[RMDB]
RNA sequence: GGGAACGACUCGAGUAGAGUCGAAAAGCCGUAGAACUGGGGUUUCAAAGCGGUAUGUGCCUUCGAUUAUGCAAUGCCCUUGGAAAUCCCAAACGUGCUGGCGAAAAGGUCGAACUUCGGUUCGACCGAGAAAGUGAGUGUUCGCACUCACUUUCUCAAAAGAAACAACAACAACAAC
Reactivity to 2A3 in 0.01 (KOAc 150mM, MgCl2 10mM, bicine 150mM(pH8.5), 24C), signal-to-noise 1, nucleotides 027 to 126: g000c030c030g020u060a030g040a130a020c050u010g010g030g000g000u020u000u000c000a030a000a010g040c030g060g000u020a030u180g300u070g060c010c030u140u150c130g130a210u150u260a070u220g000c000a010a020u010g000c020c020c000u000u070g050g000a000a000a000u030c000c000c000a010a000a000c000g070u140g040c050u070g030g050c030g060a070a070a070a070g010g010u000c000g010a000a010c020u060u080c210g000g000u000u000c000g010a000c010c000
Reactivity to DMS in 0.01 (KOAc 150mM, MgCl2 10mM, bicine 150mM(pH8.5), 24C), signal-to-noise 2, nucleotides 027 to 126: g000c010c010g010u000a080g000a100a210c220u000g020g000g020g030u000u000u020c000a050a010a030g000c170g040g020u000a010u000g010u000g010c000c100u000u000c270g010a180u020u000a050u010g010c000a040a020u000g010c000c000c000u000u000g000g000a020a020a010u000c000c000c000a000a040a050c110g010u010g000c020u010g030g010c150g000a110a060a070a120g000g010u000c010g010a010a000c000u000u010c190g020g000u000u000c000g010a000c000c010
An RNA of 177 nucleotides, treated with 2A3 and DMS and read out base by base. For 2A3 the reverse transcriptase was SuperScript II with manganese. DMS adducts were read by reverse transcription with MarathonRT. Source: RMDB library RFMREP, as collected in RNAgym. The 2A3 profile rests on 1,360 reads. The DMS profile rests on 1,837 reads. The reactions ran in a buffer of 150 mM KOAc, 10 mM MgCl2 and 150 mM bicine (pH 8.5), at 24 C.